[RMDB]
RNA sequence: GGGAACGACUCGAGUAGAGUCGAAAAGAAAGCGUGUGGCUGCGAUGCAGUCUGUCGUAUGACCGGCCAAAUGCGACUGCGCGCGAAAGUCCUUGAUGCUGAUAGGCCGGUUAUAGCAUCGGACGAAGGGCGGGCGCGUGUUCGCAUGCGUUUGCCCAAAAGAAACAACAACAACAAC
Reactivity to DMS in 0.01 (KOAc 150mM, MgCl2 10mM, bicine 150mM(pH8.5), 24C), signal-to-noise 9, nucleotides 027 to 126: g010a080a080a130g010c010g030u000g010u010g020g000c010u000g000c010g020a170u050g010c020a010g010u010c010u040g020u010c010g020u000a070u020g000a070c020c000g000g010c010c010a090a100a080u020g000c010g000a020c000u030g010c010g010c010g010c020g010a060a090a110g000u010c000c000u020u030g020a010u000g010c000u000g020a180u020a080g000g010c000c000g000g000u000u010a050u030a020g010c010a010u000c000g010g000a020c040g010a130a110
Reactivity to 2A3 in 0.01 (KOAc 150mM, MgCl2 10mM, bicine 150mM(pH8.5), 24C), signal-to-noise 9, nucleotides 027 to 126: g100a020a060a010g010c020g000u050g040u070g040g000c010u010g000c060g140a110u300g000c000a000g010u000c020u040g010u010c010g010u040a100u160g060a040c000c000g000g000c000c000a060a130a070u220g000c000g000a000c020u050g000c010g000c010g000c000g080a120a030a010g000u000c010c000u040u250g000a000u000g000c000u020g030a050u050a090g000g000c000c000g000g000u010u030a030u010a000g000c000a000u000c000g000g000a010c020g020a080a080
Source: RMDB library OK1LIB, as collected in RNAgym. This 177-nucleotide RNA was probed chemically with DMS and 2A3. 2A3 adducts were read by reverse transcription with SuperScript II with manganese. The RNA was probed in 150 mM KOAc, 10 mM MgCl2 and 150 mM bicine (pH 8.5) at 24 C. For 2A3, 82,991 sequencing reads were counted.